[RMDB]
RNA sequence: GGGAACGACUCGAGUAGAGUCGAAAAGAUAUGGAGUCAUGCAGCGAAGAACUAUCACGACUCGGAAACGAGUCGUGAGUAGGGAGCUGACAUGACUCCUAAGUCAAAAGACGGCUUCGGCCGUCAACAAUUAGGACUACUUCGGUAGUCCUAAUUGAAAAGAAACAACAACAACAAC
Reactivity to DMS in 0.01 (KOAc 150mM, MgCl2 10mM, bicine 150mM(pH8.5), 24C), signal-to-noise 7, nucleotides 027 to 126: g000a040u000a300u010g000g010a030g010u000c000a000u000g010c020a010g010c010g010a100a200g010a150a170c010u000a050u010c000a010c000g000a020c000u000c000g000g000a110a110a210c010g020a020g000u000c000g010u000g000a020g020u010a020g000g000g010a140g020c000u000g000a130c000a010u000g000a010c000u000c000c000u000a010a090g010u000c040a090a100a120a200g010a020c010g010g010c010u000u010c270g020g000c010c000g010u000c000a040a110
Reactivity to 2A3 in 0.01 (KOAc 150mM, MgCl2 10mM, bicine 150mM(pH8.5), 24C), signal-to-noise 4, nucleotides 027 to 126: g020a000u080a040u160g000g000a000g010u010c000a010u010g000c000a010g010c030g150a300a030g030a170a100c010u000a000u040c000a000c010g010a010c010u000c010g000g000a090a070a010c000g010a000g030u040c000g010u000g010a000g000u010a000g010g030g020a040g000c010u020g090a040c000a010u000g010a000c000u010c000c000u000a000a000g000u000c000a010a000a010a090g000a000c000g010g000c000u060u150c300g220g000c030c010g000u000c000a000a000
The record gives the reactivity of an RNA of 177 nucleotides to DMS and 2A3.
For 2A3 the reverse transcriptase was SuperScript II with manganese.
For 2A3, 13,898 sequencing reads were counted.
The RNA was probed in 150 mM KOAc, 10 mM MgCl2 and 150 mM bicine (pH 8.5) at 24 C.